[RMDB]
RNA sequence: GGGAACGACUCGAGUAGAGUCGAAAAUAGAUUAGAGUAAUAGCAAUCGUCGUAUUCUGAUCAGUGUAUGUGACGAUUGGUCAACGCUACAUACACUUGAGACGGUAGCGUUGACUAUCCGUCUCAAGAUAGUAUUCGGAUUCGUCUGGAUGCUAUCAAAAGAAACAACAACAACAAC
Reactivity to DMS in 0.01 (KOAc 150mM, MgCl2 10mM, bicine 150mM(pH8.5), 24C), signal-to-noise 9, nucleotides 027 to 126: u030a080g010a030u000u010a030g000a030g010u010a040a060u020a100g020c030a070a030u020c060g010u010c030g010u000a020u000u000c010u000g000a050u020c070a120g030u020g000u020a030u020g010u010g010a020c010g000a040u010u000g010g010u010c060a050a030c030g000c020u010a020c030a060u020a120c150a090c080u010u010g000a050g000a030c080g000g020u000a000g010c010g010u010u010g000a050c000u010a000u020c090c040g000u000c000u000c010a040a100
Reactivity to 2A3 in 0.01 (KOAc 150mM, MgCl2 10mM, bicine 150mM(pH8.5), 24C), signal-to-noise 9, nucleotides 027 to 126: u180a020g070a030u060u050a030g020a020g070u090a050a160u080a150g060c060a050a120u110c050g080u020c020g010u030a040u040u020c020u040g070a110u070c060a080g050u030g030u160a080u100g080u050g010a010c010g010a020u010u040g020g010u030c010a020a010c010g000c010u010a010c000a060u130a040c060a030c100u060u100g030a040g010a050c040g040g000u000a000g000c010g010u010u020g000a000c000u000a000u020c020c030g000u000c000u000c010a000a020